[RMDB]
RNA sequence: GGGAACGACUCGAGUAGAGUCGAAAAGUGUCGGACUCGCAAGUGCGAAUAUAUUUUAUCCCUAAACAGGGAGUGGAAAGCACCUCCUGGAGUGGAAAACACGUCCAUCCCAAAGCGAGAAAUGAAACGUCAAAGAGUCUUUCGAGACUCUUUGACGAAAAGAAACAACAACAACAAC
Reactivity to DMS in 0.01 (KOAc 150mM, MgCl2 10mM, bicine 150mM(pH8.5), 24C), signal-to-noise 1, nucleotides 027 to 126: g010u050g020u000c080g000g000a130c000u010c000g050c000a230a210g010u000g010c080g010a060a150u020a180u010a060u000u000u020u020a170u000c000c000c000u000a060a010a120c260a010g000g020g000a000g000u000g000g000a110a050a180g000c080a000c000c050u000c070c070u050g050g010a060g000u010g080g000a030a040a180a140c140a050c120g000u000c000c000a070u020c010c010c000a070a040a070g050c010g000a000g000a080a050a090u010g010a010a110a080
Source: RMDB library M2PK90, as collected in RNAgym. Chemical mapping of a 177-nucleotide RNA with DMS. For DMS the reverse transcriptase was MarathonRT. Reactivities are given for positions 27 through 126.